[RMDB]
Structure probing data (DMS and 2A3) for a 177-nucleotide construct. For 2A3, 72,159 sequencing reads were counted. It was measured as part of the RMDB library OK1LIB.
RNA sequence: GGGAACGACUCGAGUAGAGUCGAAAAGCUAGCCAGCGCAUGAUGAGACUGCCGUGACGUCUAGCCUGCGUCUCAACUAGUCUCCAUCAAUCAAAACGCUGGGAUUGAUGUACGAGACUAGUACACAGUCUAUGCACUUGUUCGCAGGUGUAUAGACAAAAGAAACAACAACAACAAC
Reactivity to DMS in 0.01 (KOAc 150mM, MgCl2 10mM, bicine 150mM(pH8.5), 24C), signal-to-noise 9, nucleotides 027 to 126: g010c030u010a070g010c030c020a100g010c030g010c040a050u010g000a110u020g010a100g010a070c040u010g010c080c050g020u000g000a080c150g010u020c010u000a080g010c030c040u000g010c050g010u000c020u010c050a110a050c010u000a000g010u000c000u000c010c010a010u000c010a000a010u000c020a060a060a080a120c160g010c080u020g000g000g000a010u000u000g000a020u000g010u050a110c190g000a030g010a020c000u000a010g010u000a080c230a120c250a160
Reactivity to 2A3 in 0.01 (KOAc 150mM, MgCl2 10mM, bicine 150mM(pH8.5), 24C), signal-to-noise 9, nucleotides 027 to 126: g030c020u030a010g010c000c020a010g000c020g000c030a040u030g030a060u060g010a030g030a060c040u030g040c050c020g030u030g030a060c030g010u010c010u020a020g010c000c000u020g020c010g040u000c010u000c020a020a020c000u010a000g000u000c000u000c000c000a000u000c000a000a000u000c010a010a040a060a110c100g030c090u110g050g000g000a000u000u010g000a000u000g020u090a090c100g000a000g000a010c010u000a000g010u050a010c120a000c010a030
DMS adducts were read by reverse transcription with MarathonRT. 2A3 adducts were read by reverse transcription with SuperScript II with manganese. The reactions ran in a buffer of 150 mM KOAc, 10 mM MgCl2 and 150 mM bicine (pH 8.5), at 24 C.